[RMDB]
RNA sequence: GGGAACGACUCGAGUAGAGUCGAAAAGAUAUGGAAGCUAUGCCUAAUCGACUUGAUUCAACAGCUAACUGCAUCGGAAACGAUGUUUAGACAUGAAUACAGUCGAUUAGGCAUAGCUUCCUAAGUCGUCCACAACUAUGUUCGCAUAGUUGUGGACAAAAGAAACAACAACAACAAC
Reactivity to DMS in 0.01 (KOAc 150mM, MgCl2 10mM, bicine 150mM(pH8.5), 24C), signal-to-noise 1, nucleotides 027 to 126: g000a010u040a300u020g000g020a000a030g000c000u000a010u000g010c020c000u000a000a010u000c020g000a000c000u000u000g010a090u000u000c000a000a190c300a300g000c000u000a050a050c300u010g020c020a010u000c000g010g000a140a100a240c000g040a040u000g000u000u000u000a010g000a060c080a210u010g020a010a020u000a080c050a010g040u000c000g000a000u000u000a000g000g000c000a010u000a000g000c000u000u000c000c000u000a010a080g010u000c090